RNA sequence: GGGAACGACUCGAGUAGAGUCGAAAAUACUGGAACUCCUCUACAGCCACCUCACUGUGCAACAUCUUCAGAGGAAGCUAUCUGGCAGGAGCUUCCCUUAUCUAUACAGUGACGAGAAACGCUGGCCAAUAGGCGCAUAGUUCGCUAUGCGCCUAUUAAAAGAAACAACAACAACAAC
Reactivity to 2A3 in 0.01 (KOAc 150mM, MgCl2 10mM, bicine 150mM(pH8.5), 24C), signal-to-noise 5, nucleotides 027 to 126: u120a010c030u050g040g020a070a060c020u000c040c000u030c030u090a070c060a020g010c010c000a060c020c000u020c000a020c010u030g010u040g070c070a090a090c010a200u110c060u210u120c060a020g090a060g110g010a010a000g000c010u040a040u240c030u110g100g010c060a050g070g000a020g010c000u010u000c010c000c000u040u080a120u050c080u040a100u010a130c010a020g010u020g070a030c050g040a050g110a160a060a030c050g010c020u010g050g000c000c000
Reactivity to DMS in 0.01 (KOAc 150mM, MgCl2 10mM, bicine 150mM(pH8.5), 24C), signal-to-noise 3, nucleotides 027 to 126: u040a080c090u020g010g000a040a100c050u020c020c040u010c070u020a110c070a060g010c020c060a140c070c030u000c010a050c000u000g000u020g020c140a090a070c180a050u010c080u020u040c160a050g010a070g000g020a030a080g000c020u000a040u010c010u040g010g000c040a100g000g000a010g000c000u000u000c000c000c040u010u020a060u030c140u030a100u010a090c040a030g000u010g000a030c110g000a180g000a090a090a120c200g030c000u000g020g010c050c100
Chemical mapping of a 177-nucleotide RNA with 2A3 and DMS. DMS adducts were read by reverse transcription with MarathonRT. The reactions ran in a buffer of 150 mM KOAc, 10 mM MgCl2 and 150 mM bicine (pH 8.5), at 24 C. It was measured as part of the RMDB library OK1LIB.